Chemical mapping of a 177-nucleotide RNA with DMS and 2A3. 2A3 adducts were read by reverse transcription with SuperScript II with manganese. It was measured as part of the RMDB library OK2TRN. For DMS the reverse transcriptase was MarathonRT. The DMS profile rests on 78,463 reads. The reactions ran in a buffer of 150 mM KOAc, 10 mM MgCl2 and 150 mM bicine (pH 8.5), at 24 C.
[RMDB]
RNA sequence: GGGAACGACUCGAGUAGAGUCGAAAAGGUGAGCGCUUCUUGCAGGAGGAUGUGGGGACGCGGCACCGGCUGGUGGCAGCCACAGUCACCAGGCAGGAUGAAGGCACCUACUCCUGCCGCGUGGGCGUAAGCCCAUAUAGUUCGCUAUAUGGGCUUAAAAAGAAACAACAACAACAAC
Reactivity to DMS in 0.01 (KOAc 150mM, MgCl2 10mM, bicine 150mM(pH8.5), 24C), signal-to-noise 9, nucleotides 027 to 126: g010g010u000g010a160g010c020g010c020u000u010c040u000u000g030c010a050g010g010a060g010g000a040u010g020u000g000g000g000g010a090c170g010c010g000g010c010a040c010c010g000g010c010u000g000g010u000g010g000c010a100g010c100c150a050c150a080g000u000c000a010c000c000a030g010g010c020a070g010g000a120u000g000a050a050g000g010c020a100c020c010u000a060c040u000c000c000u000g000c000c030g010c040g020u000g000g000g000c040g010
Reactivity to 2A3 in 0.01 (KOAc 150mM, MgCl2 10mM, bicine 150mM(pH8.5), 24C), signal-to-noise 7, nucleotides 027 to 126: g110g040u140g070a090g020c030g000c030u120u130c040u160u300g020c070a080g020g060a010g040g010a070u180g030u050g030g010g010g010a030c200g000c000g020g000c010a010c010c010g020g010c010u010g000g010u010g010g000c010a030g100c070c050a080c050a040g010u000c000a000c000c000a010g040g050c020a050g020g020a160u050g020a030a030g030g000c020a020c030c000u000a010c010u000c000c010u030g120c000c000g010c010g010u060g000g000g000c000g010